[RMDB]
An RNA of 177 nucleotides, treated with DMS and 2A3 and read out base by base.
The reactions ran in a buffer of 150 mM KOAc, 10 mM MgCl2 and 150 mM bicine (pH 8.5), at 24 C.
Source: RMDB library TTRDES, as collected in RNAgym.
RNA sequence: GGGAACGACUCGAGUAGAGUCGAAAAAAAAAAGAUAUGGAUACGCAAAUCAUUUGGACCUGAUGACCUCGCUCGGAAACGAGCGAGCAAGGGUCCAUGUGACUCGUACGUAUCCUAAGUCAAAAAAGAAUACAAUAAAGUUCGCUUUAUUGUAUUCAAAAGAAACAACAACAACAAC
Reactivity to DMS in 0.01 (KOAc 150mM, MgCl2 10mM, bicine 150mM(pH8.5), 24C), signal-to-noise 3, nucleotides 027 to 126: a000a030a090a100a040a140g020a030u000a300u000g000g000a000u000a000c000g000c040a090a140a110u000c020a020u000u000u010g000g000a020c000c010u000g020a080u020g020a110c300c000u000c010g000c000u000c000g000g010a150a090a140c010g000a000g020c010g020a000g010c010a050a070g010g010g000u010c000c000a000u000g000u010g000a020c140u000c300g010u000a100c010g000u000a000u000c000c000u010a040a060g020u010c030a010a050a090a110a040a160
Reactivity to 2A3 in 0.01 (KOAc 150mM, MgCl2 10mM, bicine 150mM(pH8.5), 24C), signal-to-noise 1, nucleotides 027 to 126: a020a030a000a000a000a050g060a040u130a030u140g000g000a010u010a000c000g020c030a000a060a160u010c000a010u010u030u030g000g000a010c010c000u100g140a300u100g020a170c020c010u000c000g010c000u000c010g000g060a030a090a090c000g020a000g000c020g000a000g020c010a020a080g020g000g000u000c010c000a000u000g000u000g000a010c020u040c190g120u280a140c020g000u000a010u040c000c000u010a150a030g070u030c030a080a020a000a000a040a260